[RMDB]
RNA sequence: GGGAACGACUCGAGUAGAGUCGAAAACAUUUGCUUCGGCAAAUGAAAAAAGCGUACUACAUAGGGAGAAACACAACUACCCACCUAUUCCCAAAUAGGAAUAGAGGUUGAGUUUCGUUGAUCUAUGUAUCGCAAAAAAGGGUUAUUCGUAACCCAAGAAUACAGUGAGAUUCGUCUCACUGUAUUCAAAAGAAACAACAACAACAAC
Reactivity to 2A3 in 0.01 (KOAc 150mM, MgCl2 10mM, bicine 150mM(pH8.5), 24C), signal-to-noise 4, nucleotides 027 to 156: c000a000u000u000u000g000c010u030u080c230g140g000c020a010a020a020u060g050a180a020a010a000a000a020g020c030g030u090a080c060u000a000c030a000u000a000g010g000g010a020g010a010a000a010c020a000c000a040a030c010u110a130c040c050c010a030c010c020u000a000u000u030c030c040c040a170a290a240u180a070g000g000a000a000u010a010g030a020g010g000u000u010g020a050g050u010u000u000c030g080u130u020g000a000u000c000u000a000u000g010u000a030u240c050g000c060a060a040a030a020a040a050g020g010g020u020u010a030u020u100c240g010u040a020a000c010c000c010a010a020
Reactivity to DMS in 0.01 (KOAc 150mM, MgCl2 10mM, bicine 150mM(pH8.5), 24C), signal-to-noise 2, nucleotides 027 to 156: c000a020u000u000u000g000c000u010u010c300g100g000c010a000a020a000u010g000a000a030a050a100a100a200g000c000g000u000a070c060u010a030c020a040u000a030g000g000g040a030g010a040a010a030c010a040c040a020a000c000u000a010c010c020c050a300c110c000u000a010u000u000c000c000c010a070a190a190u010a060g000g010a020a010u000a010g010a100g010g000u000u000g020a120g010u000u000u010c010g000u010u010g000a030u000c000u000a020u000g000u000a000u000c030g020c020a000a010a040a170a080a100g010g020g000u000u000a080u010u000c160g030u000a000a060c000c010c000a020a300
The record gives the reactivity of an RNA of 207 nucleotides to 2A3 and DMS. The DMS profile rests on 4,064 reads. DMS adducts were read by reverse transcription with MarathonRT. Source: RMDB library RNAMAK, as collected in RNAgym. Conditions: 150 mM KOAc, 10 mM MgCl2 and 150 mM bicine (pH 8.5), 24 C.